The record gives the reactivity of an RNA of 177 nucleotides to 2A3 and DMS. Reactivities are given for positions 27 through 126.
[RMDB]
RNA sequence: GGGAACGACUCGAGUAGAGUCGAAAAAGCUUUCACAGUCAGGUAGAACUGCCGUUUUAUCACUCUUCAGCGCUGUGGUUUUUAUGGGUAUUUUUUCUGUUUAUGGUUCACAAGCACAGAGUCAGAGCCUUAAUCAGGAUUUCGAUCCUGAUUAAGGAAAAGAAACAACAACAACAAC
Reactivity to 2A3 in 0.01 (KOAc 150mM, MgCl2 10mM, bicine 150mM(pH8.5), 24C), signal-to-noise 3, nucleotides 027 to 126: a000g030c040u040u110u110c040a040c010a080g010u070c020a020g100g000u040a020g030a110a020c040u070g090c050c060g030u030u000u060u060a060u060c030a050c070u100c040u170u110c060a030g030c030g030c100u030g000u020g000g050u000u020u030u060u170a110u050g070g020g030u040a170u030u090u030u020u010u030c030u010g070u030u130u060a090u100g050g000u080u080c060a060c000a090a030g040c000a050c020a070g030a020g020u050c010a020g010a020g060
Reactivity to DMS in 0.01 (KOAc 150mM, MgCl2 10mM, bicine 150mM(pH8.5), 24C), signal-to-noise 5, nucleotides 027 to 126: a080g010c060u000u000u010c050a070c080a060g020u010c070a080g010g000u000a050g010a060a060c050u010g010c170c110g000u000u000u000u010a050u000c030a140c090u010c060u010u000c110a110g010c090g020c050u000g010u000g000g000u010u000u000u000u010a070u020g000g000g010u000a000u000u000u000u010u000u010c040u010g010u010u010u000a100u010g000g010u010u000c040a050c100a060a090g000c050a050c060a050g000a090g000u010c070a080g010a140g000
For 2A3, 2,680 sequencing reads were counted.
For DMS the reverse transcriptase was MarathonRT.